Notes
The record gives the reactivity of an RNA of 177 nucleotides to DMS and 2A3. For DMS, 1,542 sequencing reads were counted. The reactions ran in a buffer of 150 mM KOAc, 10 mM MgCl2 and 150 mM bicine (pH 8.5), at 24 C. It was measured as part of the RMDB library OK2TST.
[RMDB]
RNA sequence: GGGAACGACUCGAGUAGAGUCGAAAAUCAUCGCGUAUGACUGUAAUGGCUCCAGAAUCCAGAAAACAACUGUCUCUCUGGUGGAGACUCCCUCCUGUACAUUUGAAUUGGAGAAUGUUACAGAGAGCGAUCUUGUAGCAUUCGUGCUACAAGAUCGAAAAGAAACAACAACAACAAC
Reactivity to DMS in 0.01 (KOAc 150mM, MgCl2 10mM, bicine 150mM(pH8.5), 24C), signal-to-noise 2, nucleotides 027 to 126: u010c040a030u010c050g020c190g000u000a070u000g010a100c070u010g010u020a110a070u000g000g010c010u020c010c020a070g010a180a080u010c020c040a060g010a030a030a080a050c190a110a090c230u010g000u000c010u010c080u000c040u040g000g040u010g000g000a020g010a070c060u010c040c010c000u000c000c020u000g010u000a020c080a040u000u000u010g000a080a240u000u010g000g020a240g010a030a020u000g000u010u010a000c000a010g000a120g020a070g010
Reactivity to 2A3 in 0.01 (KOAc 150mM, MgCl2 10mM, bicine 150mM(pH8.5), 24C), signal-to-noise 2, nucleotides 027 to 126: u020c000a010u000c020g000c020g170u300a080u120g080a090c010u050g000u050a050a090u070g050g000c000u000c010c010a010g130a140a080u100c050c010a000g020a020a100a020a020c070a040a110c090u180g040u050c050u000c010u040c030u120g140g000u070g010g020a020g020a010c020u050c010c020c000u020c000c010u030g040u050a030c020a100u020u060u120g190a250a140u150u050g040g000a070g020a090a050u010g020u090u020a020c020a000g080a020g020a010g220